[RMDB]
RNA sequence: GGGAACGACUCGAGUAGAGUCGAAAAACAGCCGUUCACGGCGGGAUGAAUCUGACAACCCCUACGUGAACCACGUUCGACGUGUCGAACGGAUGGGUUAAGUGACGAGAUGCCGUAUCGAUACAUAACCGAGGCGGUCUACCCCACUAAUCGGAUAUCAUAGUUGUCCAUUCGUGGACAACUAUGAAAAAGAAACAACAACAACAAC
Reactivity to 2A3 in 0.01 (KOAc 150mM, MgCl2 10mM, bicine 150mM(pH8.5), 24C), signal-to-noise 4, nucleotides 027 to 156: a010c040a050g080c060c020g000u020u020c020a000c000g000g000c090g020g000g000a040u060g040a100a190u180c180u210g030a060c040a060a080c010c000c000c010u040a020c000g000u010g000a000a000c030c020a050c030g030u040u030c000g000a030c060g110u090g040u070c010g000a010a000c000g040g020a050u110g090g010g000u080u060a150a130g040u130g100a050c060g010a030g020a170u170g040c000c000g000u040a170u230c000g010a010u030a170c090a060u180a100a000c030c020g010a000g010g010c010g000g010u040c050u070a140c010c020c020c010a010c050u120a100a100u050c040g050g040a040u080a020
Reactivity to DMS in 0.01 (KOAc 150mM, MgCl2 10mM, bicine 150mM(pH8.5), 24C), signal-to-noise 1, nucleotides 027 to 156: a110c040a100g030c030c030g010u000u010c020a030c020g010g060c090g020g030g020a070u000g020a160a120u000c050u040g010a190c100a110a040c030c000c000c000u060a050c030g030u000g100a030a040c010c040a010c000g000u010u000c000g020a000c120g030u000g050u030c000g010a040a030c000g000g000a120u000g010g030g010u000u000a030a100g000u000g000a090c020g010a150g010a300u000g030c020c030g000u000a170u010c010g020a010u000a090c210a140u000a090a040c020c010g000a060g060g050c020g010g000u000c040u000a100c050c020c010c020a100c060u000a040a100u000c010g010g000a120u000a200